This 177-nucleotide RNA was probed chemically with DMS and 2A3. Conditions: 150 mM KOAc, 10 mM MgCl2 and 150 mM bicine (pH 8.5), 24 C.
RNA sequence: GGGAACGACUCGAGUAGAGUCGAAAACGAGCCCGUUCGCGGGCUCGAAAAACUUUCCAAUUUGUAAGUCGCUCUGGAUAAGAGCGUCUGCUAAAUGACUUAAAAAACAGUGCAGUUCGCUGCACUGCUAGCAUAUAAGCUUCGGCUUAUAUGCUAGAAAAGAAACAACAACAACAAC
Reactivity to DMS in 0.01 (KOAc 150mM, MgCl2 10mM, bicine 150mM(pH8.5), 24C), signal-to-noise 2, nucleotides 027 to 126: c010g000a020g020c000c010c000g070u000u000c190g020c000g040g010g060c020u000c010g000a020a040a090a070a100c180u010u000u000c010c010a170a140u000u010u000g000u000a050a040g040u010c000g000c000u000c010u000g000g020a220u010a080a020g000a020g020c000g010u000c010u000g030c040u000a050a070a080u010g010a110c190u010u020a000a040a040a080a030a170c020a010g010u000g000c000a020g020u000u020c160g020c020u000g010c000a010c010u000g000
Reactivity to 2A3 in 0.01 (KOAc 150mM, MgCl2 10mM, bicine 150mM(pH8.5), 24C), signal-to-noise 2, nucleotides 027 to 126: c000g000a000g010c000c040c000g040u030u020c250g020c040g110g000g070c000u010c020g000a000a000a000a000a000c020u040u050u000c000c020a090a090u040u080u090g060u040a150a080g020u030c000g020c000u030c010u020g040g130a170u080a300a020g000a000g020c000g000u010c000u010g000c020u110a090a110a100u110g080a120c120u140u250a070a110a030a030a080a090c010a000g010u010g000c000a000g000u030u050c090g080c080u010g000c010a000c000u000g020